Chemical mapping of a 177-nucleotide RNA with DMS and 2A3.
The data come from the RNA Mapping Database (RMDB), library TTRDES.
The DMS profile rests on 3,537 reads.
DMS adducts were read by reverse transcription with MarathonRT.
Conditions: 150 mM KOAc, 10 mM MgCl2 and 150 mM bicine (pH 8.5), 24 C.
[RMDB]
RNA sequence: GGGAACGACUCGAGUAGAGUCGAAAAGAUAUGGACAGCAGGUGGCGCGAAACGACCUCAUCGGAAACGAUGAAGUCGGAGCCACCGCUGUCCUAAGUCAAACAACAGCAACUUCGGUUGCUGUUGAUCUUAUUCCCUCGUUCGCGAGGGAAUAAGAAAAAGAAACAACAACAACAAC
Reactivity to DMS in 0.01 (KOAc 150mM, MgCl2 10mM, bicine 150mM(pH8.5), 24C), signal-to-noise 2, nucleotides 027 to 126: g000a010u000a010u010g000g010a040c020a010g020c000a090g070g020u000g020g030c010g070c280g010a120a020a040c000g010a010c000c030u010c000a000u010c010g020g000a000a000a030c010g020a020u000g000a020a010g020u000c000g000g000a020g030c000c000a020c000c010g000c020u000g000u010c000c000u000a000a050g000u000c010a140a140a300c010a010a010c020a000g000c010a010a020c000u000u020c250g020g000u000u000g020c000u000g000u000u000g000a050
Reactivity to 2A3 in 0.01 (KOAc 150mM, MgCl2 10mM, bicine 150mM(pH8.5), 24C), signal-to-noise 2, nucleotides 027 to 126: g000a000u000a010u030g000g000a010c000a000g030c150a190g000g020u000g030g000c000g020c180g300a160a020a000c000g000a000c000c000u000c010a020u000c010g000g000a000a000a010c000g000a000u010g000a000a000g000u000c010g000g000a000g000c010c000a010c000c000g020c000u000g000u000c000c000u000a000a000g010u000c000a000a010a150c010a010a000c010a010g010c010a010a010c000u130u170c300g260g000u010u000g010c000u010g000u000u000g000a010